This 177-nucleotide RNA was probed chemically with DMS and 2A3.
The DMS profile rests on 2,584 reads.
For 2A3, 6,239 sequencing reads were counted.

RNA sequence: GGGAACGACUCGAGUAGAGUCGAAAAGAUAUGGAGGAUGUGAGCUUCGUUGAUCGAUUUAUGGACGUAACAUCCAUCGGAAACGAUGGUGGUCCAUAAAUCGGGAGAAGCCCAUCCUCCUAAGUCAGAUGAUAUCUCACUUCGGUGAGAUAUCAUCAAAAGAAACAACAACAACAAC
Reactivity to DMS in 0.01 (KOAc 150mM, MgCl2 10mM, bicine 150mM(pH8.5), 24C), signal-to-noise 2, nucleotides 027 to 126: g010a030u000a300u010g010g020a020g000g020a020u000g000u010g010a180g080c010u000u000c000g010u010u010g010a110u010c010g000a020u000u000u000a010u000g000g000a000c010g010u000a020a030c250a020u040c000c000a030u010c000g010g010a150a090a230c000g010a010u000g000g010u000g050g000u000c000c000a000u000a000a000a000u000c010g010g000g000a010g000a000a010g000c010c010c000a010u000c000c000u000c000c020u000a000a030g000u000c070a180
Reactivity to 2A3 in 0.01 (KOAc 150mM, MgCl2 10mM, bicine 150mM(pH8.5), 24C), signal-to-noise 1, nucleotides 027 to 126: g040a020u090a060u240g000g000a010g010g000a000u020g200u140g120a150g000c030u010u010c020g220u260u060g010a020u020c010g000a010u000u010u000a000u010g000g020a000c010g050u060a060a010c080a300u170c030c020a000u010c000g020g040a100a090a040c020g000a000u000g000g000u000g000g020u000c000c000a010u000a000a000a000u000c000g000g000g000a060g000a010a000g010c000c010c000a000u020c000c000u000c000c010u010a010a000g010u000c040a010